[RMDB]
RNA sequence: GGGAACGACUCGAGUAGAGUCGAAAAGAGUCAUACAACUCCAGAAACCAUUCCUUAUACCUUGAGUAUUGCUGAAUUCAGUUUAGCGUGCAUGCUCUUGGCUAUUCUCAUAGUGAUUGUCAAAUUUAAAACGACGAUGACUUCGGUCAUCGUCGAACCAUAUAUGCCACUUCGGUGGCAUAUAUGGAAAAGAAACAACAACAACAAC
Reactivity to 2A3 in 0.01 (KOAc 150mM, MgCl2 10mM, bicine 150mM(pH8.5), 24C), signal-to-noise 2, nucleotides 027 to 156: g010a010g040u100c060a040u130a210c070a110a030c050u000c000c020a010g060a040a120a050c070c020a030u040u050c000c000u110u070a090u010a110c000c010u000u000g000a000g000u010a010u110u130g020c010u020g050a200a120u180u190c050a100g270u120u140u190a040g030c050g080u070g050c020a010u000g000c010u000c000u000u020g000g000c000u070a020u130u000c090u020c050a040u100a080g070u080g140a250u080u060g110u030c040a020a100a190u150u190u220a100a090a010a010c000g000a000c000g000a000u000g000a000c010u000u040c190g030g000u000c000a000u000c000g000u000c000g000a000a000
Reactivity to DMS in 0.01 (KOAc 150mM, MgCl2 10mM, bicine 150mM(pH8.5), 24C), signal-to-noise 1, nucleotides 027 to 156: g000a030g010u000c030a150u010a080c080a040a050c010u030c010c040a180g000a180a130a220c090c060a150u010u010c030c020u000u010a220u000a000c000c010u010u010g000a040g060u010a030u000u000g000c000u000g000a050a120u000u010c150a190g050u010u010u000a060g020c070g030u000g010c080a120u000g000c000u020c010u000u010g010g030c020u010a170u000u020c000u000c050a160u030a170g030u000g010a040u000u000g040u000c050a080a120a150u010u000u040a050a050a100a210c030g070a010c000g000a010u000g000a040c000u010u000c230g080g030u010c030a010u000c000g030u000c010g020a010a060

The record gives the reactivity of an RNA of 207 nucleotides to 2A3 and DMS. Source: RMDB library M2RFPK, as collected in RNAgym. The reactions ran in a buffer of 150 mM KOAc, 10 mM MgCl2 and 150 mM bicine (pH 8.5), at 24 C. DMS adducts were read by reverse transcription with MarathonRT.